The data come from the RNA Mapping Database (RMDB), library RFM100. This 177-nucleotide RNA was probed chemically with 2A3 and DMS. For DMS, 1,222 sequencing reads were counted.
RNA sequence: GGGAACGACUCGAGUAGAGUCGAAAAUGAAGUGAAAUUGGAAUUUCGCUAGGUUUGCUUAGUAGCUAGUACAAGUGUCGUGCUGCUCCAGGGUUCUUGGUGUGGGUUCCGUCUCACACUUCACACCUAACCUGGCGCAAUUCGUUGCGCCAGGUUAAAAAGAAACAACAACAACAAC
Reactivity to 2A3 in 0.01 (KOAc 150mM, MgCl2 10mM, bicine 150mM(pH8.5), 24C), signal-to-noise 1, nucleotides 027 to 126: u050g000a020a000g010u000g050a000a000a100u010u140g050g000a100a010u070u000u000c010g000c000u010a060g000g070u070u100u240g140c030u010u010a030g010u000a000g060c050u030a010g030u060a040c000a030a220g070u110g200u230c120g040u010g010c000u000g030c000u000c000c010a010g070g000g000u000u000c000u000u000g030g000u000g030u070g100g000g000u020u150c030c050g060u020c030u000c000a030c000a000c000u030u050c020a100c140a090c000c000
Reactivity to DMS in 0.01 (KOAc 150mM, MgCl2 10mM, bicine 150mM(pH8.5), 24C), signal-to-noise 1, nucleotides 027 to 126: u020g030a180a000g030u000g010a030a010a020u030u000g040g030a030a200u000u000u000c000g010c000u020a010g010g030u000u000u000g000c080u030u010a120g000u000a050g000c000u010a000g000u070a000c030a200a140g000u030g060u030c140g000u000g030c000u000g000c000u000c120c210a120g000g000g000u000u040c000u020u010g000g020u030g000u000g000g000g000u040u020c100c020g020u000c070u000c100a130c000a010c060u030u000c050a000c240a010c060c040